[RMDB]
RNA sequence: GGGAACGACUCGAGUAGAGUCGAAAAUACCCGGAAGCUGCGCCGCUGGUGAGCGCGCAGCUGCCGGAGCAGGUGAAGCUGCCGCCGUGGCAGCCUGGGGCGUCCAGCCUGCAGGACCUGAUCAGGCGACAUACCUGCCAUUCGUGGCAGGUAUGUCAAAAGAAACAACAACAACAAC
Reactivity to 2A3 in 0.01 (KOAc 150mM, MgCl2 10mM, bicine 150mM(pH8.5), 24C), signal-to-noise 1, nucleotides 027 to 126: u080a010c010c020c000g010g050a040a010g010c010u000g000c000g000c010c100g000c040u090g090g300u300g300a030g000c030g000c000g000c010a000g000c010u000g000c010c000g000g000a010g080c010a000g060g050u130g170a150a000g000c000u000g030c000c010g120c110c080g220u170g010g000c000a000g000c010c000u010g000g000g000g040c050g060u130c100c020a060g010c000c000u060g190c010a020g000g070a050c020c000u060g020a130u050c050a000g000g020c060
Reactivity to DMS in 0.01 (KOAc 150mM, MgCl2 10mM, bicine 150mM(pH8.5), 24C), signal-to-noise 2, nucleotides 027 to 126: u010a130c060c000c000g010g020a040a020g020c000u000g010c000g050c090c150g110c010u010g030g030u010g010a050g030c010g020c020g010c000a000g030c000u010g000c010c020g010g000a070g000c020a010g020g020u000g010a160a140g010c020u000g030c000c010g050c150c190g000u000g010g010c000a030g010c000c000u000g000g000g000g010c050g010u020c150c140a190g010c000c010u010g010c020a070g010g000a090c050c010u000g020a080u000c010a110g000g010c130